RNA sequence: GGGAACGACUCGAGUAGAGUCGAAAAGUGUUAAUCGCGGCGAUAUGCUUAGCAUGGAAGAUGUCCUUGAUAUUCUGAGGAUACCACUGGUUGGCGUUAUUCCAGAAGAUCAGUCUGUAUUGCGCGCGGUACUGUCGGAUUUCGAUCCGACAGUACCAAAAGAAACAACAACAACAAC
Reactivity to DMS in 0.01 (KOAc 150mM, MgCl2 10mM, bicine 150mM(pH8.5), 24C), signal-to-noise 3, nucleotides 027 to 126: g000u010g000u020u010a060a080u000c050g000c020g000g030c020g020a030u010a010u000g010c090u010u000a080g030c060a060u000g020g020a080a060g010a090u000g000u000c050c080u000u000g010a040u000a050u000u000c010u010g000a160g000g020a000u000a030c030c020a060c060u030g030g000u010u010g030g020c290g000u000u000a040u000u000c010c020a010g000a050a020g000a020u000c010a040g010u000c120u010g000u000a050u000u000g000c050g000c070g030c140
Reactivity to 2A3 in 0.01 (KOAc 150mM, MgCl2 10mM, bicine 150mM(pH8.5), 24C), signal-to-noise 2, nucleotides 027 to 126: g110u060g090u050u160a130a090u190c010g000c010g050g000c050g010a020u030a030u170g050c050u070u100a050g030c040a020u060g050g090a140a020g090a230u090g040u030c040c000u010u080g010a050u010a050u130u000c050u090g010a120g120g000a000u020a030c000c000a040c050u200g190g080u160u140g100g040c090g000u020u060a030u050u020c000c010a020g010a030a000g030a010u040c000a020g080u000c010u120g080u000a090u050u110g030c110g000c010g010c030
The record gives the reactivity of an RNA of 177 nucleotides to DMS and 2A3. The reactions ran in a buffer of 150 mM KOAc, 10 mM MgCl2 and 150 mM bicine (pH 8.5), at 24 C. The data come from the RNA Mapping Database (RMDB), library OK2TST.